[RMDB]
Chemical mapping of a 207-nucleotide RNA with 2A3 and DMS.
For 2A3, 2,337 sequencing reads were counted.
RNA sequence: GGGAACGACUCGAGUAGAGUCGAAAAGCGUACUACGAGAGGACUGCUGGAGCGUUACGUAACGCAUAUCCCAAAUAGGAUAUGCGGAUAAGUAACGCGUUGAAAGCAGUCUCCCCACCUCGUAUCGCAAAUGUGGCCAUGUUCGCAUGGCCACAAACAACUUUGAGGACUUCGGUCCUCAAAGUUGAAAAGAAACAACAACAACAAC
Reactivity to 2A3 in 0.01 (KOAc 150mM, MgCl2 10mM, bicine 150mM(pH8.5), 24C), signal-to-noise 2, nucleotides 027 to 156: g030c010g020u100a100c060u000a000c020g000a000g000a010g020g010a010c000u010g000c020u020g030g010a030g010c000g010u000u000a000c000g020u010a030a010c000g000c000a000u000a000u050c030c020c010a140a300a080u300a040g000g000a000u000a010u000g010c000g000g000a020u020a020a000g010u000a000a000c020g010c000g000u040u000g010a000a000a000g020c000a010g010u000c000u030c000c000c000c000a070c000c010u000c000g020u010a030u300c020g010c040a050a070a080u100g010u000g010g000c000c010a000u010g030u040u060c230g020c150a000u000g000g000c000c000a000c000a000a000a010
Reactivity to DMS in 0.01 (KOAc 150mM, MgCl2 10mM, bicine 150mM(pH8.5), 24C), signal-to-noise 2, nucleotides 027 to 156: g040c000g030u000a010c180u000a090c030g110a060g020a300g030g000a010c010u010g000c010u000g000g010a140g010c020g040u020u010a000c000g000u000a090a270c020g010c010a010u000a000u000c000c000c010a060a100a300u000a050g010g000a020u000a000u000g000c000g020g030a020u000a020a200g010u010a000a010c050g000c000g000u000u000g030a100a250a080g010c000a040g020u010c000u010c180c060c010c050a300c120c000u000c050g010u020a010u010c050g010c040a070a070a070u000g020u000g010g000c000c030a020u000g000u000u020c300g070c010a020u000g000g000c020c010a030c010a020a020a080
For DMS the reverse transcriptase was MarathonRT. The reactions ran in a buffer of 150 mM KOAc, 10 mM MgCl2 and 150 mM bicine (pH 8.5), at 24 C. 2A3 adducts were read by reverse transcription with SuperScript II with manganese.